Record summary: The record gives the reactivity of an RNA of 207 nucleotides to DMS and 2A3. For DMS, 2,142 sequencing reads were counted. Reactivities are given for positions 27 through 156. Source: RMDB library OK3TST, as collected in RNAgym. For 2A3 the reverse transcriptase was SuperScript II with manganese.
RNA sequence: GGGAACGACUCGAGUAGAGUCGAAAAGGAAAGGAAAGUAACAUUUGAACAUCAACUGUGUGCCAUGAUGGUUAUAAGGAUUAGGGGGAUAGAGAUGAACAAGACAUUGUUUCUACUUACAGGAAGUAUACAAUUUAGUUGGGGAGACAAACAAUAAUCCUACAUGCUAGUUCGCUAGCAUGUAGGAAAAAGAAACAACAACAACAAC
Reactivity to DMS in 0.01 (KOAc 150mM, MgCl2 10mM, bicine 150mM(pH8.5), 24C), signal-to-noise 2, nucleotides 027 to 156: g020g030a050a100a080g000g010a060a060a080g020u010a060a100c080a220u010u000u000g010a100a120c000a130u000c010a060a060c080u000g020u000g060u010g060c090c060a150u010g010a050u000g010g040u000u000a030u010a110a160g010g000a120u000u010a130g000g010g000g030g020a130u000a030g000a150g030a090u010g000a000a100c060a040a070g010a100c130a080u010u000g000u000u000u000c030u000a100c080u000u000a160c060a150g020g010a010a090g020u000a040u000a000c040a060a010u000u010u000a080g010u010u010g030g060g000g010a150g010a110c020a050a020a080c080a050a100u000a080a140
Reactivity to 2A3 in 0.01 (KOAc 150mM, MgCl2 10mM, bicine 150mM(pH8.5), 24C), signal-to-noise 2, nucleotides 027 to 156: g030g030a030a000a010g030g000a060a010a040g000u060a100a030c040a090u080u060u160g040a040a030c030a060u050c020a030a090c060u010g000u000g040u030g090c000c000a010u130g000a000u050g060g020u060u060a170u000a120a020g000g010a040u050u170a050g030g000g000g000g000a010u080a000g030a030g000a030u050g020a020a010c030a090a030g030a000c030a010u020u010g010u050u040u000c010u080a090c010u070u050a010c000a010g060g050a000a020g040u060a050u030a030c060a060a090u050u160u250a100g020u010u020g000g000g000g000a000g040a010c110a020a090a000c030a000a020u300a000a020